[RMDB]
RNA sequence: GGGAACGACUCGAGUAGAGUCGAAAAAGACAUACGUUCGCGUAUGUCUGACGGGCACCUGACCCUAAGGAUAUGCUCUAUGACAGGACACACUGAUUGUGAUACCUCGAGAUUUCGAUCUCGAGAAGAUAGUCCGAGCAUUCGUGCUCGGACUAUCAAAAGAAACAACAACAACAAC
Reactivity to 2A3 in 0.01 (KOAc 150mM, MgCl2 10mM, bicine 150mM(pH8.5), 24C), signal-to-noise 2, nucleotides 027 to 126: a000g000a000c000a010u000a000c020g050u020u070c220g000c010g150u010a000u010g000u000c000u000g000a010c000g020g000g010c030a000c020c050u030g120a150c000c030c000u020a060a020g050g020a040u060a050u110g040c010u000c040u070a130u150g140a040c050a080g030g060a040c000a010c000a010c060u130g120a250u140u060g030u050g070a060u050a070c000c030u000c000g000a010g000a000u060u110u070c150g050a000u000c020u010c000g000a000g000a000a010
Reactivity to DMS in 0.01 (KOAc 150mM, MgCl2 10mM, bicine 150mM(pH8.5), 24C), signal-to-noise 3, nucleotides 027 to 126: a010g020a000c000a000u020a000c000g020u000u000c220g040c030g010u000a000u000g000u000c000u000g000a090c170g000g000g010c020a040c030c010u000g000a190c030c000c030u030a070a070g000g010a160u010a060u000g000c050u000c020u000a110u010g020a140c080a030g000g000a150c020a050c050a080c090u000g000a110u000u010g010u010g000a180u000a070c190c000u010c000g000a010g000a000u000u000u010c190g000a000u000c000u000c000g000a010g020a040a080